[RMDB]
RNA sequence: GGGAACGACUCGAGUAGAGUCGAAAAGCGCACAAAGUGGGUUGUUGCGCACACAAGAGGAGCAGGACAAUGAUAGCUGAUGAUGGAAAUCAUGUUCUAGACCGAAAAUGUCGCACUCACCUUAUCUCCAAAUCACAUUAUCUGCCCGACCACUAGACCAUUACGUUGAUUUCGAUCAACGUAAUGGAAAAGAAACAACAACAACAAC
Reactivity to DMS in 0.01 (KOAc 150mM, MgCl2 10mM, bicine 150mM(pH8.5), 24C), signal-to-noise 3, nucleotides 027 to 156: g030c060g050c050a110c090a080a100a120g050u000g000g030g000u010u000g030u000u010g010c020g040c060a140c080a080c080a070a120g020a100g030g010a100g030c050a160g030g020a090c040a060a150u000g010a130u010a060g010c050u010g020a050u010g010a130u010g020g020a080a100a050u000c050a050u000g020u000u000c030u010a030g000a110c000c000g010a090a060a000a070u000g020u000c000g050c060a070c040u000c010a040c020c030u000u000a050u010c020u020c010c020a030a080a090u010c030a060c050a070u000u000a040u010c090u000g000c010c000c000g010a070c040c000a080c080u000a110g010a300
Reactivity to 2A3 in 0.01 (KOAc 150mM, MgCl2 10mM, bicine 150mM(pH8.5), 24C), signal-to-noise 8, nucleotides 027 to 156: g000c010g010c030a010c020a030a090a030g060u070g030g070g020u030u050g070u080u060g020c000g030c010a010c010a000c000a010a090g040a050g040g010a050g020c040a020g030g030a020c030a080a150u050g030a030u040a050g050c070u040g030a070u070g010a040u160g100g030a020a060a020u050c030a020u050g030u040u020c050u060a070g030a060c020c010g080a060a030a000a080u150g020u030c010g000c030a040c040u040c010a060c000c010u090u090a070u070c040u000c020c000a030a060a080u090c040a050c010a080u050u140a040u090c030u050g020c000c000c010g060a080c010c010a050c030u020a020g040a050

Chemical mapping of a 207-nucleotide RNA with DMS and 2A3. For 2A3, 9,244 sequencing reads were counted. The data come from the RNA Mapping Database (RMDB), library OK3TST.